Conditions: 150 mM KOAc, 10 mM MgCl2 and 150 mM bicine (pH 8.5), 24 C. This 207-nucleotide RNA was probed chemically with 2A3 and DMS. Values cover nucleotides 27 to 156. DMS adducts were read by reverse transcription with MarathonRT. Values are in units of 0.01, from 0 to 300, in steps of 10.
[RMDB]
RNA sequence: GGGAACGACUCGAGUAGAGUCGAAAAGACGCCUUUAGUAGAAGAGGCUAGGGGGUAUUCCGGUGUGGGAUACUUAGUAAUAUGCAACGCUAAUUGCAUAAGAUUGUAGGACGGAAUUUACAGUCUUUAGAGAUAAGCACGUUCGCGUGCUUAUCAAUCCUCCUGUAAAGUUCGCUUUACAGGAGGAAAAAGAAACAACAACAACAAC
Reactivity to 2A3 in 0.01 (KOAc 150mM, MgCl2 10mM, bicine 150mM(pH8.5), 24C), signal-to-noise 2, nucleotides 027 to 156: g080a000c030g020c030c000u060u020u050a090g060u010a030g040a250a020g000a050g040g000c020u010a050g050g000g000g010g000u050a050u060u000c050c080g090g030u150g040u120g110g010g000a010u010a110c010u070u030a020g010u040a080a080u080a020u070g000c010a010a000c060g020c140u110a100a040u050u040g010c010a020u020a040a010g050a020u020u030g030u050a040g000g090a010c070g020g040a040a030u020u140u010a080c030a000g000u000c010u010u120u120a150g030a000g000a040u000a000a000g000c010a000c010g010u040u060c070g050c020g090u000g000c000u010u000a000u000c000a000a000
Reactivity to DMS in 0.01 (KOAc 150mM, MgCl2 10mM, bicine 150mM(pH8.5), 24C), signal-to-noise 1, nucleotides 027 to 156: g010a130c060g020c000c010u000u000u000a110g010u000a130g010a140a080g010a070g000g000c010u000a030g000g020g010g020g030u010a050u000u000c040c010g030g040u000g060u030g000g010g000a040u000a030c040u000u030a090g020u000a120a210u000a050u000g010c010a040a080c050g010c190u010a090a180u000u010g000c000a020u000a060a080g030a080u000u010g010u000a050g030g010a150c050g020g030a110a170u000u000u000a090c010a080g020u010c000u000u000u000a130g010a200g000a050u000a010a010g000c000a000c010g040u000u010c300g010c020g040u000g000c000u010u000a010u000c000a060a110